Structure probing data (2A3 and DMS) for a 207-nucleotide construct. The reactions ran in a buffer of 150 mM KOAc, 10 mM MgCl2 and 150 mM bicine (pH 8.5), at 24 C. For 2A3 the reverse transcriptase was SuperScript II with manganese.
[RMDB]
RNA sequence: GGGAACGACUCGAGUAGAGUCGAAAAGUGUGCUAUACUAGUAAGGUUGAAUGAAUCAACCCUUGGUGCUUAGCUUCUUUCACCAAGCAUAUUACACGCGGAUAACCUCCAAAGGAGAAAAGAUGAACUGCCCGACGAUUCUUCGGAAUCGUCGGAAUCAAAUAAGUGACUUCGGUCACUUAUUUGAAAAAGAAACAACAACAACAAC
Reactivity to 2A3 in 0.01 (KOAc 150mM, MgCl2 10mM, bicine 150mM(pH8.5), 24C), signal-to-noise 6, nucleotides 027 to 156: g020u020g010u010g030c030u050a040u040a220c090u090a090g160u140a140a090g020g010u000u020g040a110a150u150g080a110a150u080c000a010a000c000c000c000u000u000g000g000u010g010c050u070u060a050g020c000u100u060c010u030u070u020c010a010c000c000a000a000g010c020a030u030a040u120u120a030c030a000c030g030c020g010g020a050u050a120a090c010c010u020c050c040a100a070a030g050g020a040g030a030a120a030a020g090a050u150g050a080a070c040u090g030c010c010c000g000a000c000g000a000u010u000c000u030u070c200g050g010a000a000u000c000g000u000c000g000g000a000a000
Reactivity to DMS in 0.01 (KOAc 150mM, MgCl2 10mM, bicine 150mM(pH8.5), 24C), signal-to-noise 3, nucleotides 027 to 156: g010u000g020u000g020c030u000a080u000a080c090u000a130g010u010a110a090g010g020u000u010g010a030a210u000g010a170a240u000c000a020a040c010c000c040u000u000g010g000u000g010c080u000u000a100g010c060u000u000c060u000u010u000c020a060c020c000a000a080g010c050a120u000a040u000u000a060c050a050c020g000c010g010g010a230u000a080a110c040c020u000c040c030a050a060a110g020g000a120g020a060a070a060a070g000a090u010g010a050a120c040u000g030c080c020c010g020a030c000g000a010u000u010c000u000u010c300g060g000a030a010u000c010g000u000c000g010g010a010a030